Record summary: Structure probing data (DMS and 2A3) for a 177-nucleotide construct. The RNA was probed in 150 mM KOAc, 10 mM MgCl2 and 150 mM bicine (pH 8.5) at 24 C. 2A3 adducts were read by reverse transcription with SuperScript II with manganese. In probing experiments dimethyl sulfate is read out at A N1 and C N3, which are open when not base-paired.
RNA sequence: GGGAACGACUCGAGUAGAGUCGAAAAGUCGACAAGAGAUCUUCGAAUGACUCCGUCUUCUCAAGUUGAAGAAUCAACUAGUAGGGAUCAAAUAUUCGAAAUUGAUCACCCCGAACACGAGGAAGAAGAUGAGUAAUUACUUCGGUAAUUACUCAUCAAAAGAAACAACAACAACAAC
Reactivity to DMS in 0.01 (KOAc 150mM, MgCl2 10mM, bicine 150mM(pH8.5), 24C), signal-to-noise 6, nucleotides 027 to 126: g010u000c030g020a150c140a100a110g010a130g010a050u000c030u000u010c020g000a030a040u000g000a060c080u000c110c220g020u000c020u010u000c030u000c050a160a050g020u000u010g010a050a200g010a150a170u000c000a000a030c010u000a110g020u000a090g000g000g010a030u010c050a080a080a100u000a060u000u000c100g000a040a070a130u010u010g000a010u000c040a180c040c010c010c030g000a090a060c220a060c130g000a060g010g010a080a090g000a080a150
Reactivity to 2A3 in 0.01 (KOAc 150mM, MgCl2 10mM, bicine 150mM(pH8.5), 24C), signal-to-noise 6, nucleotides 027 to 126: g040u030c020g040a060c050a150a050g030a010g010a220u000c020u020u020c030g030a080a050u070g020a040c050u000c030c000g080u040c000u170u040c010u020c040a040a030g000u010u010g050a130a090g130a240a300u060c010a010a010c010u010a020g070u070a020g010g020g020a010u030c030a040a090a070u200a030u050u070c030g020a020a060a050u070u070g010a010u000c020a120c020c000c010c000g050a060a020c070a020c070g050a050g100g040a060a060g020a060a020

About this RNA
As a SHAPE reagent, 2A3 marks flexible, mostly unpaired nucleotides at the ribose 2'-OH. The 2A3 profile rests on 7,989 reads. Reactivities are given for positions 27 through 126.